[RMDB]
Notes
Chemical mapping of a 207-nucleotide RNA with DMS and 2A3. For 2A3, 2,093 sequencing reads were counted. Values cover nucleotides 27 to 156. For DMS, 3,181 sequencing reads were counted.
RNA sequence: GGGAACGACUCGAGUAGAGUCGAAAAGGGAAUGGUGGUUUACCCCGUUAUCAAAUGAUUACCGACCAAUAAUUGGCGAAACUCGUUUCGCGUUGGCUGCCUAAUUCAAGGAAUUAGAGUGCCUUCAAAGACAUCAAGAAGUUCGCUUCUUGAUGAACUGAUCUUCAAUCUUCGGAUUGAAGAUCAGAAAAGAAACAACAACAACAAC
Reactivity to DMS in 0.01 (KOAc 150mM, MgCl2 10mM, bicine 150mM(pH8.5), 24C), signal-to-noise 2, nucleotides 027 to 156: g000g010g000a060a080u000g010g020u000g010g000u000u000u000a120c000c000c020c020g040u000u000a080u000c080a070a080a080u020g010a040u000u000a040c060c020g000a100c020c020a070a110u000a080a130u000u000g030g020c000g030a030a080a040c080u010c170g040u000u000u000c020g030c040g000u000u000g000g000c050u010g000c040c020u010a020a070u000u020c070a170a100g010g000a020a070u000u000a080g000a210g060u000g000c040c040u030u000c040a040a100a130g000a190c000a010u010c000a010a010g010a040a030g010u000u000c300g030c000u000u010c000u000u010g010a000u010g010a030a110
Reactivity to 2A3 in 0.01 (KOAc 150mM, MgCl2 10mM, bicine 150mM(pH8.5), 24C), signal-to-noise 4, nucleotides 027 to 156: g030g000g030a100a120u130g020g020u040g000g040u020u100u200a130c050c000c000c020g110u110u120a110u080c060a070a060a100u150g030a030u050u080a020c020c000g050a040c060c050a020a030u190a100a070u140u140g040g000c000g010a050a030a040c050u040c090g040u010u000u000c030g000c030g030u040u020g000g000c040u090g070c000c000u010a000a000u000u020c100a230a160g170g000a080a000u010u000a020g060a020g090u010g010c010c000u010u000c050a090a060a010g060a050c000a000u000c000a000a000g000a000a000g010u040u160c150g040c140u000u000c000u000u020g000a000u000g000a010a010